The record gives the reactivity of an RNA of 207 nucleotides to 2A3 and DMS. High DMS reactivity at an A or C suggests that its Watson-Crick edge is free. DMS adducts were read by reverse transcription with MarathonRT. 2A3 adducts were read by reverse transcription with SuperScript II with manganese. For 2A3, 6,358 sequencing reads were counted. The reactions ran in a buffer of 150 mM KOAc, 10 mM MgCl2 and 150 mM bicine (pH 8.5), at 24 C.
RNA sequence: GGGAACGACUCGAGUAGAGUCGAAAAACUCCUAUUCCAACACGUCCUCGUCGUACAGAGUGGUAACAUGUGUCACCACAUAUCCAAGCUUGGGUACACGGGCUUGACCCAACACCUUGGGCGGAUGAAAACCAGAUUACGUUCGCGUAAUCUGGAAGAAAACUAAUGAGUUCGCUCAUUAGUUUUCAAAAGAAACAACAACAACAAC
Reactivity to 2A3 in 0.01 (KOAc 150mM, MgCl2 10mM, bicine 150mM(pH8.5), 24C), signal-to-noise 6, nucleotides 027 to 156: a000c080u070c020c000u060a110u110u070c060c030a060a020c030a040c090g020u010c000c010u050c040g100u040c050g030u090a050c050a060g120a030g080u040g010g040u070a090a040c050a170u180g100u090g060u170c040a020c030c000a010c010a040u090a040u030c030c010a020a030g030c060u060u020g040g010g020u060a070c070a050c080g080g020g020c030u040u140g040a090c000c000c000a010a010c030a050c060c000u010u030g000g000g000c010g020g010a050u090g070a040a060a020a050c000c000a000g010a000u000u000a000c010g010u020u060c200g000c000g090u000a000a000u000c000u000g000g000a000a000
Reactivity to DMS in 0.01 (KOAc 150mM, MgCl2 10mM, bicine 150mM(pH8.5), 24C), signal-to-noise 2, nucleotides 027 to 156: a060c040u000c040c020u000a090u000u000c070c040a060a110c070a130c040g000u010c000c000u000c010g030u010c050g010u000a160c070a110g000a150g020u000g020g020u000a040a060c020a120u010g030u000g020u000c000a060c020c010a030c040a140u010a040u010c040c000a020a100g000c080u000u000g010g010g030u010a100c070a100c110g010g020g000c050u010u000g030a150c010c000c000a080a090c060a070c080c020u000u010g010g020g020c080g010g000a140u000g000a080a080a120a200c000c010a000g000a020u000u000a010c000g010u000u000c300g030c040g010u000a000a010u000c000u010g000g010a010a030